[RMDB]
Notes
Structure probing data (DMS and 2A3) for a 177-nucleotide construct. The DMS profile rests on 630 reads. The RNA was probed in 150 mM KOAc, 10 mM MgCl2 and 150 mM bicine (pH 8.5) at 24 C. DMS (dimethyl sulfate) methylates the pairing face of unpaired adenines and cytosines.
RNA sequence: GGGAACGACUCGAGUAGAGUCGAAAAAUUUCGCCUUACAAUUCACAGAAUGCUGUGUCUCGUUCAAUGCUGGGUCUUACCACUCAGACUGUUGAUUCCUCACAGGGUUCAGAAUACCAGUACGUUACCCCAGUAUUGAGUUCGCUCAAUACUGGGGAAAAGAAACAACAACAACAAC
Reactivity to DMS in 0.01 (KOAc 150mM, MgCl2 10mM, bicine 150mM(pH8.5), 24C), signal-to-noise 1, nucleotides 027 to 126: a140u000u000u000c060g000c070c070u000u000a110c050a090a020u000u020c050a110c170a130g020a080a020u000g010c000u000g000u000g020u010c090u020c140g000u000u000c040a020a060u000g000c010u020g020g000g000u000c070u010u020a150c200c290a020c020u000c020a030g000a060c030u020g020u000u000g000a050u010u000c040c030u000c030a020c050a040g000g000g010u000u000c030a090g000a010a140u010a060c110c120a020g050u010a070c140g000u000u000a170
Reactivity to 2A3 in 0.01 (KOAc 150mM, MgCl2 10mM, bicine 150mM(pH8.5), 24C), signal-to-noise 1, nucleotides 027 to 126: a000u080u050u070c060g030c020c000u020u020a060c040a050a040u000u040c020a010c010a130g060a090a070u100g110c010u000g000u000g050u070c010u050c120g030u020u030c000a010a030u030g010c000u000g020g020g000u010c030u090u060a020c060c000a000c000u000c000a050g040a280c060u050g080u070u010g010a030u130u040c000c010u030c030a020c000a020g050g070g010u030u000c000a000g030a010a010u040a080c030c030a060g070u080a060c060g000u040u120a040